[RMDB]
RNA sequence: GGGAACGACUCGAGUAGAGUCGAAAAGCCGGGCCGGCCGAUGGUCCGGCGGUAAUGCUGGUGCACGGCUUCCCGCAGAACUGGUGGGAGUGGCGCGACCUCAUCGGCCCGCUGGCCGCCGACGGCAACGAGGUGAGGAAUUCGUUCCUCACCUCGUAAAAGAAACAACAACAACAAC
Reactivity to 2A3 in 0.01 (KOAc 150mM, MgCl2 10mM, bicine 150mM(pH8.5), 24C), signal-to-noise 3, nucleotides 027 to 126: g030c020c000g010g060g000c000c000g030g040c070c050g050a060u080g000g010u090c020c000g010g010c020g000g000u060a030a020u110g030c070u010g000g020u040g050c150a000c100g000g000c030u100u080c040c000c000g000c010a060g030a250a130c110u210g040g000u020g000g000g010a040g060u180g070g000c070g020c020g140a180c040c040u050c010a070u020c020g040g000c000c000c000g030c030u030g030g010c010c000g000c030c000g040a050c030g000g000c000a030
Reactivity to DMS in 0.01 (KOAc 150mM, MgCl2 10mM, bicine 150mM(pH8.5), 24C), signal-to-noise 1, nucleotides 027 to 126: g010c010c000g070g020g030c010c010g030g000c040c030g040a090u040g050g010u020c000c020g000g040c010g030g000u030a020a010u020g050c030u000g000g010u060g040c090a260c000g000g000c050u040u000c010c000c000g000c120a060g010a190a080c210u040g010g000u000g020g000g020a030g030u000g000g000c070g000c090g000a140c080c110u020c040a070u000c030g020g020c000c060c050g000c080u000g020g010c000c000g010c050c120g000a030c010g010g000c000a220
Source: RMDB library OK1LIB, as collected in RNAgym. An RNA of 177 nucleotides, treated with 2A3 and DMS and read out base by base. The DMS profile rests on 1,978 reads. For 2A3 the reverse transcriptase was SuperScript II with manganese.